[RMDB]
RNA sequence: GGGAACGACUCGAGUAGAGUCGAAAAUAAGCACCUCGUUACGUGAGGCGGCUACACGAACAUAGGCCACUGACCCCGAACGUCGAGAGACGCCCCGGGUCAGGACAGCUCUUCCCGGCUUAAGGGUAAAAUCACAACGUCUUCGGACGUUGUGAAAGUUACUCUAUUGAUUCGUCAAUAGAGUAACAAAAGAAACAACAACAACAAC
Reactivity to 2A3 in 0.01 (KOAc 150mM, MgCl2 10mM, bicine 150mM(pH8.5), 24C), signal-to-noise 4, nucleotides 027 to 156: u170a030a000g000c010a020c010c010u020c010g080u070u180a170c060g050u130g070a030g010g030c100g050g010c040u070a030c070a030c140g160a230a010c040a110u170a070g080g050c010c020a050c020u000g010a010c000c040c000c030g030a070a020c000g000u000c010g000a030g000a010g000a160c000g020c010c030c050c030g000g000g000u000c000a000g000g030a010c020a010g000c010u030c010u030u020c010c000c000g010g020c020u100u150a040a060g020g020g020u070a050a040a040a120u030c000a000c000a000a000c000g010u000c000u040u020c090g130g000a000c000g000u000u000g010u000g010a000a000a000
Reactivity to DMS in 0.01 (KOAc 150mM, MgCl2 10mM, bicine 150mM(pH8.5), 24C), signal-to-noise 2, nucleotides 027 to 156: u000a070a090g020c000a030c010c000u000c010g000u000u000a160c120g020u000g020a040g040g000c000g020g030c000u000a060c070a120c060g010a150a100c090a160u000a070g040g020c010c000a160c010u000g000a060c010c000c010c080g010a040a010c000g040u010c000g010a300g010a300g000a030c010g040c000c010c010c200g020g010g000u000c020a010g000g000a060c080a110g000c030u020c050u000u000c000c010c000g020g020c020u000u000a090a060g010g040g000u000a060a060a100a160u000c010a000c000a000a000c000g020u000c000u000u000c300g040g000a010c010g000u000u000g000u000g030a000a020a070
Description
The record gives the reactivity of an RNA of 207 nucleotides to 2A3 and DMS. Reactivities are given for positions 27 through 156. Conditions: 150 mM KOAc, 10 mM MgCl2 and 150 mM bicine (pH 8.5), 24 C.